[RMDB]
RNA sequence: GGGAACGACUCGAGUAGAGUCGAAAAAGCGGGCUGUGGAUUGCAGCUUGGCCGGCAAAUGGAAUCAGAUCUGGCGACAUUAUUCAGAAGCUGUUCCCUCAGUAAAUGCGCUGUUUUCCAUCAGGAACAGGGAUCAAUAGUUCGCUAUUGAUCCCUGAAAAGAAACAACAACAACAAC
Reactivity to 2A3 in 0.01 (KOAc 150mM, MgCl2 10mM, bicine 150mM(pH8.5), 24C), signal-to-noise 3, nucleotides 027 to 126: a000g060c030g000g030g000c020u010g000u050g060g110a140u070u280g000c000a000g000c000u060u090g080g010c000c010g020g020c060a080a070a060u150g100g060a090a130u200c030a050g040a120u020c010u050g000g020c020g040a040c020a070u040u130a130u100u210c080a050g030a110a010g040c010u010g010u010u030c000c000c000u010c000a030g010u050a110a120a100u170g090c020g000c000u010g050u020u000u000u000c060c010a090u130c100a080g090g020a040a090
Reactivity to DMS in 0.01 (KOAc 150mM, MgCl2 10mM, bicine 150mM(pH8.5), 24C), signal-to-noise 4, nucleotides 027 to 126: a030g000c010g020g000g000c000u000g020u010g010g000a120u010u010g010c000a010g000c010u000u030g010g000c010c000g000g010c110a030a060a120u020g000g020a120a150u020c170a030g000a150u020c030u000g000g000c070g000a100c080a040u020u010a120u040u000c160a130g000a060a060g000c010u000g010u000u010c060c000c010u000c020a030g020u030a050a100a050u010g010c010g020c010u000g000u000u000u000u000c010c010a160u050c110a080g010g020a050a160
Description: The data come from the RNA Mapping Database (RMDB), libraries RFM100 and RFMREP. An RNA of 177 nucleotides, treated with 2A3 and DMS and read out base by base. High DMS reactivity at an A or C suggests that its Watson-Crick edge is free. Reactivities are rounded to 0.1 and cut off at 0 and 3.